[RMDB]
RNA sequence: GGGAACGACUCGAGUAGAGUCGAAAAAUGCCAAGCAAGUCAUGCAUGCUUUUUGGGGCGUGGGGCAGAUGAGCUUUGUCAAGCAUGCGAUUUUUGUCAAUGAAGACGCUCCUAAUCUAAGGGACACCACGACAUAAUCGUUCGCGAUUAUGUCGUGAAAAGAAACAACAACAACAAC
Reactivity to DMS in 0.01 (KOAc 150mM, MgCl2 10mM, bicine 150mM(pH8.5), 24C), signal-to-noise 3, nucleotides 027 to 126: a070u010g000c030c010a100a090g020c110a050a060g000u000c070a080u000g010c030a070u000g010c010u010u000u000u000u010g000g010g000g030c030g020u010g040g020g020g020c030a030g000a080u000g000a240g010c110u000u000u000g010u000c150a090a090g000c030a060u000g010c050g010a070u000u000u010u030u010g010u000c060a110a060u010g010a100a080g000a060c010g010c020u000c010c010u010a040a070u010c100u000a050a090g010g000g010a100c110a090c280
Reactivity to 2A3 in 0.01 (KOAc 150mM, MgCl2 10mM, bicine 150mM(pH8.5), 24C), signal-to-noise 2, nucleotides 027 to 126: a020u110g000c000c000a000a000g070c020a060a000g070u080c020a040u090g000c000a010u050g020c010u120u090u100u140u180g010g000g000g000c020g010u020g000g050g000g000c010a020g030a100u090g050a030g060c000u070u090u080g080u080c020a030a010g020c000a020u030g010c010g040a090u040u030u010u060u110g080u060c040a050a060u210g110a090a060g080a000c010g010c020u000c020c010u030a050a060u050c050u120a060a090g020g000g020a000c030a010c020
The record gives the reactivity of an RNA of 177 nucleotides to DMS and 2A3. In probing experiments dimethyl sulfate is read out at A N1 and C N3, which are open when not base-paired. The DMS profile rests on 2,435 reads. 2A3 adducts were read by reverse transcription with SuperScript II with manganese. For DMS the reverse transcriptase was MarathonRT. Conditions: 150 mM KOAc, 10 mM MgCl2 and 150 mM bicine (pH 8.5), 24 C. Source: RMDB library OK2TST, as collected in RNAgym.